Chemical mapping of a 207-nucleotide RNA with 2A3. It was measured as part of the RMDB library OK3TST. For 2A3, 495 sequencing reads were counted.
RNA sequence: GGGAACGACUCGAGUAGAGUCGAAAAACAAACGGACGCAUUAAGACGAUUAACUAUCAAACCGUUUCAGGCGCGGAUUGGAUCAGCCUUCCGGAUGGUUCGAUCCCCGAAGUCUCCGAAUCGGACGUCGCCGUCUCAUAUUAUUAUGACAGCGACAGUGUCACUUCCAUUUCGAUGGAAGUGACACAAAAGAAACAACAACAACAAC
Reactivity to 2A3 in 0.01 (KOAc 150mM, MgCl2 10mM, bicine 150mM(pH8.5), 24C), signal-to-noise 1, nucleotides 027 to 156: a000c110a030a040a000c000g110g020a050c020g020c080a080u220u170a050a110g060a160c000g050a020u090u060a120a080c060u110a040u140c030a040a000a040c050c000g000u020u010u010c050a040g020g020c000g040c030g040g010a010u000u080g020g000a000u000c010a010g050c000c000u210u140c090c100g060g070a050u080g010g110u020u000c050g020a010u040c030c050c000c000g040a140a010g070u020c060u000c120c060g050a080a050u030c130g020g030a050c110g000u000c000g000c000c000g020u010c000u010c010a080u170a090u250u130a160u230u140a060u260g000a000c000a000g000c020g010a040c000a010